[RMDB]
RNA sequence: GGGAACGACUCGAGUAGAGUCGAAAAAGGCGUACGACGAAGCGUAAGAAGACACACGACUCAACUGCCCGCUUGCAGCGGAUACGAGCAAGCUGUCAAAGCAAAAUUGAGAUUGCACAGCGUACGCAAAAAUUUAAUUAUUCGUAAUUAAAUUUUUAAAAGAAACAACAACAACAAC
Reactivity to 2A3 in 0.01 (KOAc 150mM, MgCl2 10mM, bicine 150mM(pH8.5), 24C), signal-to-noise 6, nucleotides 027 to 126: a000g120g000c010g010u010a010c010g150a040c030g060a230a020g030c000g050u090a060a070g070a080a060g070a080c050a010c000a010c100g200a130c020u010c020a050a030c040u070g020c020c030c000g010c000u010u070g010c040a090g050c010g060g050a100u120a140c080g020a030g020c020a050a020g000c020u030g060u110c060a070a040a000g020c020a020a030a080a040u090u110g020a040g030a090u080u100g000c020a030c000a060g000c010g010u010a000c000g000c010
Reactivity to DMS in 0.01 (KOAc 150mM, MgCl2 10mM, bicine 150mM(pH8.5), 24C), signal-to-noise 8, nucleotides 027 to 126: a110g010g020c000g010u000a010c000g010a110c060g010a130a210g000c030g010u020a080a110g000a160a120g000a080c100a040c090a190c110g010a140c010u000c010a040a060c160u020g000c070c050c090g000c010u000u030g010c120a120g010c020g010g010a070u040a040c140g010a130g000c030a070a080g000c070u010g020u020c070a060a090a130g000c060a040a040a080a130u020u020g000a080g000a130u010u020g000c030a070c110a190g010c010g010u000a010c010g010c000